[RMDB]
RNA sequence: GGGAACGACUCGAGUAGAGUCGAAAAGAGGGAUGAAGCGCGAGAUCUAAUUCAGGUUAGCCAUUCGUUAGCGUGUCGGUUCGCAGGCGGUGGUGAAAUUAAAGAUCGACUAAGCAUGUAGUACCAAAGAUGAAUGGUUUUCGGACGGGGGUUCAACGUCCAUCCUAAAGUUCGCUUUAGGAUGGACAAAAGAAACAACAACAACAAC
Reactivity to 2A3 in 0.01 (KOAc 150mM, MgCl2 10mM, bicine 150mM(pH8.5), 24C), signal-to-noise 4, nucleotides 027 to 156: g080a010g040g010g010a050u070g060a060a040g030c030g020c050g070a060g020a040u020c060u120a110a060u140u060c060a020g110g000u060u090a010g000c010c010a030u150u140c100g000u030u080a030g000c000g010u040g020u060c030g020g020u050u040c020g010c050a040g050g000c020g040g010u010g000g020u030g020a020a040a010u110u100a100a050a020g030a030u010c020g020a020c010u070a070a020g010c030a040u060g020u080a050g030u050a040c010c030a030a060a030g060a030u090g030a040a030u020g000g010u030u000u030u100c040g030g010a020c020g060g000g000g000g000u000u080c040a030a010c100
Reactivity to DMS in 0.01 (KOAc 150mM, MgCl2 10mM, bicine 150mM(pH8.5), 24C), signal-to-noise 2, nucleotides 027 to 156: g000a070g040g010g010a200u010g000a070a110g020c060g020c070g030a130g030a060u010c030u000a050a090u000u030c070a080g000g030u000u010a220g000c000c020a060u020u000c050g030u000u000a120g010c060g030u010g000u010c070g010g000u000u000c050g010c050a220g000g000c010g000g040u000g010g000u000g000a050a090a150u010u000a040a050a040g000a080u000c030g020a070c030u010a080a060g030c040a120u010g020u000a090g040u000a050c030c040a040a040a160g000a100u000g010a080a020u020g030g000u000u000u000u000c070g010g030a090c040g000g010g010g040g050u000u010c070a090a100c110